[RMDB]
RNA sequence: GGGAACGACUCGAGUAGAGUCGAAAAGGGUGAGACCUAGGAACCGUAGGGGUAUUCUCAAAGGAAGCGUUUGCAGUGACGCCCAUGUAAGUGGGAUAUAACAACAGAACUCGUAUGAGUAGCCUAAUAAAUCGGACCUUCUUCGGAAGGUCCGAAACAAUAAGUACUUCUUCGGAAGUACUUAUUGAAAAGAAACAACAACAACAAC
Reactivity to DMS in 0.01 (KOAc 150mM, MgCl2 10mM, bicine 150mM(pH8.5), 24C), signal-to-noise 3, nucleotides 027 to 156: g020g020g020u010g020a130g000a110c040c030u010a130g010g020a090a090c060c030g020u000a060g020g020g000g010u000a050u000u000c020u020c030a080a130a160g000g000a090a070g020c060g020u010u010u020g010c040a090g000u010g010a130c100g000c000c010c020a040u000g010u000a090a170g030u000g010g000g010a060u000a080u010a130a100c020a030a130c050a110g010a060a050c030u010c010g000u010a090u000g010a100g030u000a060g010c030c010u000a000a090u000a060a090a130u000c000g010g010a020c010c010u000u000c010u010u010c300g040g010a040a010g020g010u000c010c000g000a000a010a030
Reactivity to 2A3 in 0.01 (KOAc 150mM, MgCl2 10mM, bicine 150mM(pH8.5), 24C), signal-to-noise 5, nucleotides 027 to 156: g030g010g000u040g020a050g010a060c020c040u050a050g010g080a060a050c060c020g020u070a030g000g000g020g010u050a060u110u050c050u040c040a090a090a020g100g020a070a020g030c020g020u040u060u100g030c030a020g010u000g040a030c070g000c010c000c000a010u060g070u150a120a110g020u010g020g010g000a020u040a010u030a100a040c080a030a020c020a030g090a060a020c030u030c050g090u220a080u190g030a040g030u020a020g020c000c010u080a120a080u100a100a120a030u030c000g000g000a000c000c010u000u010c010u010u020c070g090g000a000a000g000g000u000c000c000g000a000a000a000

An RNA of 207 nucleotides, treated with DMS and 2A3 and read out base by base. The RNA was probed in 150 mM KOAc, 10 mM MgCl2 and 150 mM bicine (pH 8.5) at 24 C. The data come from the RNA Mapping Database (RMDB), library M2RFPK.